[RMDB]
RNA sequence: GGGAACGACUCGAGUAGAGUCGAAAAUUUCAUGAUGAAUUUGCUUUGGAAUCUCGUUCGGCUGAAUUUCGCUGUUGAGAAGCAAAUCUGAGUCUUAAAGUUGGAAAGGUGUUCGCACCUUUCCAACGAAUCUCUCUCUCUUCGGAGAGAGAGAUUCAAAAGAAACAACAACAACAAC
Reactivity to DMS in 0.01 (KOAc 150mM, MgCl2 10mM, bicine 150mM(pH8.5), 24C), signal-to-noise 3, nucleotides 027 to 126: u010u000u000c050a090u000g000a130u000g000a110a030u000u000u000g000c010u000u000u010g030g010a140a130u000c050u010c100g000u000u000c030g020g010c000u020g020a080a180u000u000u010c110g020c010u010g040u000u000g020a070g000a060a020g000c010a020a010a010u000c050u010g000a210g000u000c070u010u010a050a060a220g010u000u000g010g010a010a000a000g020g010u000g010u000u000c270g000c000a020c010c000u010u000u000c000c000a000a010c000
Reactivity to 2A3 in 0.01 (KOAc 150mM, MgCl2 10mM, bicine 150mM(pH8.5), 24C), signal-to-noise 4, nucleotides 027 to 126: u030u060u070c050a040u120g040a060u050g050a120a170u020u000u030g000c000u110u090u110g130g110a220a190u040c020u000c040g210u100u030c010g040g000c050u100g090a230a180u120u210u290c050g000c020u020g020u070u050g020a010g000a050a010g000c010a010a000a010u010c040u030g040a030g050u010c010u040u120a210a180a030g000u000u000g000g000a000a000a000g000g010u010g040u050u130c200g000c040a000c000c000u000u020u000c000c000a000a000c000